The record gives the reactivity of an RNA of 207 nucleotides to 2A3 and DMS.
RNA sequence: GGGAACGACUCGAGUAGAGUCGAAAAGCCACACCGCUUGAUGUGCCUAGGCAGCGUGCUGAUUGGAUGACUCAGACUGACGAAGCCAUUCUGGAAACGAUUCGAGAUGAAGGGAACAUGACUCCCCAAGCUCUCGAUGAUACUUUCGACAUAGCCGCAAUGUCAUCUCGUUCGCGAGAUGACAUUGAAAAGAAACAACAACAACAAC
Reactivity to 2A3 in 0.01 (KOAc 150mM, MgCl2 10mM, bicine 150mM(pH8.5), 24C), signal-to-noise 3, nucleotides 027 to 156: g050c010c010a040c010a030c030c040g050c100u080u110g050a070u090g080u110g010c030c020u060a050g050g000c020a030g020c000g050u060g010c030u040g020a140u110u050g050g040a060u080g040a070c020u020c100a030g010a120c040u060g000a030c030g060a050a010g000c000c010a060u070u040c030u040g050g000a080a030a020c070g050a060u000u070c000g000a000g010a030u050g030a050a080g020g000g000a040a020c060a200u270g020a110c100u030c020c000c000c010a040a010g010c010u000c000u000c010g000a000u010g010a000u020a050c050u070u060u050c000g020a010c050a110u120a060g080c040c100g040
Reactivity to DMS in 0.01 (KOAc 150mM, MgCl2 10mM, bicine 150mM(pH8.5), 24C), signal-to-noise 2, nucleotides 027 to 156: g000c030c010a060c030a120c050c010g020c070u020u000g010a110u000g040u010g030c040c030u000a140g030g020c010a080g020c020g050u000g020c030u000g010a170u010u000g000g010a090u000g010a110c040u030c030a200g010a170c090u020g010a120c010g000a110a090g000c020c020a100u000u000c030u000g040g030a060a030a040c050g000a290u010u010c000g020a050g000a100u010g020a300a050g010g100g000a080a090c120a160u000g000a130c020u000c040c010c020c010a020a270g010c120u010c010u010c010g030a020u000g010a180u000a010c090u000u000u000c000g010a090c080a160u000a100g020c010c000g000
The reactions ran in a buffer of 150 mM KOAc, 10 mM MgCl2 and 150 mM bicine (pH 8.5), at 24 C.
It was measured as part of the RMDB library OK3TST.